[RMDB]
RNA sequence: GGGAACGACUCGAGUAGAGUCGAAAAGGGGUACGGACCUCAGCUGAGUCAUGGGAGCUGAAUGUAUGUGUUUCUCUUUUGUCCUGCGUGUGGCAGGCUAAUGGGGAGCACUUACAUGAGACUGUUGUUAGGUUCAGCUGUUCGCAGCUGAACCUAAAAAAGAAACAACAACAACAAC
Reactivity to 2A3 in 0.01 (KOAc 150mM, MgCl2 10mM, bicine 150mM(pH8.5), 24C), signal-to-noise 1, nucleotides 027 to 126: g040g050g000g000u170a050c050g010g060a030c000c010u070c000a000g010c000u140g010a010g010u100c010a020u120g000g060g000a000g000c030u000g060a040a000u000g000u000a000u040g000u000g020u040u040u010c000u000c000u060u030u000u020g170u300c000c000u000g000c030g000u300g030u050g300g000c000a000g010g000c020u000a000a060u080g000g000g000g000a000g000c000a000c000u000u000a000c000a000u040g040a070g000a020c100u000g050u100u030g010

Annotation
Source: RMDB library RFM100, as collected in RNAgym. The record gives the reactivity of an RNA of 177 nucleotides to 2A3. For 2A3 the reverse transcriptase was SuperScript II with manganese.